[RMDB]
RNA sequence: GGGAACGACUCGAGUAGAGUCGAAAACUAUUUAUAGACAGAACAGUGGAUUACGUAUAUCGAUAUAAAACUUAAACAAUGAUUCUUGCAGUGGUACGAAUCAACAUAGGCGAGGCAUCAACGAAAGGAGAUGUUUAUUAUUCGUAAUGAGCAUCUCAAAAGAAACAACAACAACAAC
Reactivity to 2A3 in 0.01 (KOAc 150mM, MgCl2 10mM, bicine 150mM(pH8.5), 24C), signal-to-noise 2, nucleotides 027 to 126: c000u010a060u040u190u040a080u030a000g030a020c030a010g120a110a040c060a020g070u070g090g090a140u000u080a070c060g080u130a090u040a080u300c070g020a000u070a000u060a170a110a020a040c050u080u220a180a090a010c080a160a170u150g010a070u180u100c030u080u130g000c020a100g040u170g060g040u090a010c080g000a010a000u000c000a010a100c050a030u050a020g000g010c000g000a000g000g040c000a010u030c040a130a000c040g130a140a010a000g080
Description: The data come from the RNA Mapping Database (RMDB), library OK1LIB. The record gives the reactivity of an RNA of 177 nucleotides to 2A3. Reactivities are given for positions 27 through 126. 2A3 adducts were read by reverse transcription with SuperScript II with manganese. For 2A3, 1,429 sequencing reads were counted.